[RMDB]
RNA sequence: GGGAACGACUCGAGUAGAGUCGAAAAGAUAUGGAGGUAAAACCGUAUCAGCUAGAGCGAUAAGCGAGGUAUCGGAAACGAUACUCGCUUUUGACGCUCUGCUGAUACGGUUUUACCUCCUAAGUCACCUACUAUCAGAGUUCGCUCUGAUAGUAGGAAAAGAAACAACAACAACAAC
Reactivity to DMS in 0.01 (KOAc 150mM, MgCl2 10mM, bicine 150mM(pH8.5), 24C), signal-to-noise 2, nucleotides 027 to 126: g010a050u000a300u010g020g000a020g020g010u000a000a010a000a000c000c000g000u000a010u000c000a010g010c000u020a010g010a010g030c000g000a170u000a030a000g010c010g020a030g030g000u010a000u000c000g000g010a160a080a250c000g010a020u000a010c000u000c000g020c000u000u010u010u000g030a180c110g000c000u000c000u000g000c000u000g010a010u000a010c010g000g020u000u000u000u000a010c000c000u000c000c000u000a000a050g010u000c020a270